[RMDB]
RNA sequence: GGGAACGACUCGAGUAGAGUCGAAAAGGGGUCUAUCCUUUGAUCGGAAAUUGUCAGCGUUAACACUGAAGCCUCCACGGUGUAAACGCUUGGAUUUAUUUCCGGGAGGAUAGACGGAGGCACCCAAAAGUAGGUAUGCGUUCGCGCAUACCUACAACUGUCAAUCGAAGUUCGCUUCGAUUGACAGAAAAGAAACAACAACAACAAC
Reactivity to 2A3 in 0.01 (KOAc 150mM, MgCl2 10mM, bicine 150mM(pH8.5), 24C), signal-to-noise 2, nucleotides 027 to 156: g090g000g040g010u030c010u000a000u000c000c000u130u130u120g130a130u100c000g000g060a010a090a000u120u100g140u230c070a020g000c000g000u010u000a040a000c000a010c000u010g020a180a010g080c010c000u000c000c000a030c000g000g000u010g000u000a050a070a000c000g000c000u040u120g080g030a020u070u170u100a030u000u060u090c030c000g000g000g010a000g000g000a000u010a000g000a000c010g000g010a000g000g000c000a040c000c000c020a030a120a000a060g000u000a000g000g010u000a000u000g010c000g010u030u080c300g000c010g000c110a000u010a000c000c000u010a000c000a000a000
An RNA of 207 nucleotides, treated with 2A3 and read out base by base. 2A3 adducts were read by reverse transcription with SuperScript II with manganese. The RNA was probed in 150 mM KOAc, 10 mM MgCl2 and 150 mM bicine (pH 8.5) at 24 C.